[RMDB]
RNA sequence: GGGAACGACUCGAGUAGAGUCGAAAAACCCCCGCUGUUGUUGCUCUACUGGGUUGCGAUCGAGCUUAGCCUCGUUCAUUUUUUUAUACAACAGCCCGUUAAAAACAGUAGACAGGCCGCUUUAGCUCAUAACAAUCCAGUUCGCUGGAUUGUUAUGAAAAGAAACAACAACAACAAC
Reactivity to 2A3 in 0.01 (KOAc 150mM, MgCl2 10mM, bicine 150mM(pH8.5), 24C), signal-to-noise 2, nucleotides 027 to 126: a000c040c010c000c000c050g000c030u000g000u000u000g000u010u070g010c010u000c000u040a020c010u000g010g010g010u040u060g040c080g050a020u040c000g000a010g010c020u110u110a030g030c040c000u000c000g010u030u000c000a000u060u040u000u000u020u070u160a300u050a130c030a120a000c000a010g000c000c010c020g070u080u080a060a140a020a000a000c070a020g020u000a000g040a110c070a020g090g010c050c010g040c050u090u040u110a020g030c010u020